Chemical mapping of a 177-nucleotide RNA with DMS.
Conditions: 150 mM KOAc, 10 mM MgCl2 and 150 mM bicine (pH 8.5), 24 C.
The DMS profile rests on 657 reads.

[RMDB]
RNA sequence: GGGAACGACUCGAGUAGAGUCGAAAACAGCCAGAACGAUGCCCCAUAUGCCGAGAUAGGCUGCACGGGCAAAUGCAUCGUUUGCAACGCCCAGUGUGGUGCCGCUGUCGUUAUUCGACAUGAGAAACGCAUGACGUACCUUCGGGUACGUCAUGCGAAAAGAAACAACAACAACAAC
Reactivity to DMS in 0.01 (KOAc 150mM, MgCl2 10mM, bicine 150mM(pH8.5), 24C), signal-to-noise 1, nucleotides 027 to 126: c070a220g000c010c070a110g010a060a010c060g000a040u000g000c000c010c010c000a200u000a070u010g010c000c040g010a060g000a120u010a120g020g040c000u000g000c230a060c180g000g030g040c300a080a040a040u010g040c000a010u000c080g000u000u000u030g000c120a050a150c150g030c010c010c000a120g040u040g040u000g050g000u000g000c040c070g010c060u010g010u000c020g000u000u000a150u000u000c060g010a000c000a110u000g000a170g010a060a080a090